[RMDB]
This 207-nucleotide RNA was probed chemically with DMS and 2A3. For DMS, 6,048 sequencing reads were counted. DMS adducts were read by reverse transcription with MarathonRT. The reactions ran in a buffer of 150 mM KOAc, 10 mM MgCl2 and 150 mM bicine (pH 8.5), at 24 C. Values cover nucleotides 27 to 156.

RNA sequence: GGGAACGACUCGAGUAGAGUCGAAAAUGGAGCAAUUACAGACAGCAAUUUCUUUAUUCUCUACAGAUGUAAGAUACUUGAAGACAUUCCUAUGAUGAUGCAGAAUUUUGGAUAACACGGUAUUGAUGGUAUCUGUUACCAUAAUUCCUUUGACUGACCCUAACUAAAUGUUCGCAUUUAGUUAGGGAAAAGAAACAACAACAACAAC
Reactivity to DMS in 0.01 (KOAc 150mM, MgCl2 10mM, bicine 150mM(pH8.5), 24C), signal-to-noise 2, nucleotides 027 to 156: u000g010g010a050g030c060a050a070u000u000a100c040a180g010a200c190a110g030c030a050a050u000u010u000c030u000u010u000a080u010u010c020u000c040u000a240c080a150g010a080u000g000u000a070a060g000a180u000a020c040u000u000g010a120a060g000a130c070a070u010u010c020c020u000a100u020g000a090u000g000a070u000g020c020a070g000a010a020u000u000u000u000g010g020a130u000a010a020c000a060c080g050g010u000a020u000u010g020a130u000g010g020u000a020u000c040u000g000u010u000a050c000c000a010u000a020a060u000u000c000c000u000u000u000g000a130c050u010g010a300
Reactivity to 2A3 in 0.01 (KOAc 150mM, MgCl2 10mM, bicine 150mM(pH8.5), 24C), signal-to-noise 6, nucleotides 027 to 156: u100g040g000a060g030c050a030a040u110u040a100c040a100g110a030c030a030g040c020a030a040u040u080u030c020u020u090u070a090u120u030c030u000c040u060a080c080a060g050a040u070g050u100a040a030g010a070u070a080c040u070u090g040a040a010g040a030c020a050u030u040c000c020u070a100u140g070a050u030g000a000u070g030c050a010g020a030a020u000u010u040u070g030g030a080u020a050a020c030a030c110g010g020u020a030u020u120g200a130u190g100g000u010a000u000c010u030g020u050u000a010c000c000a000u020a010a010u040u020c030c000u060u090u140g090a090c020u030g030a030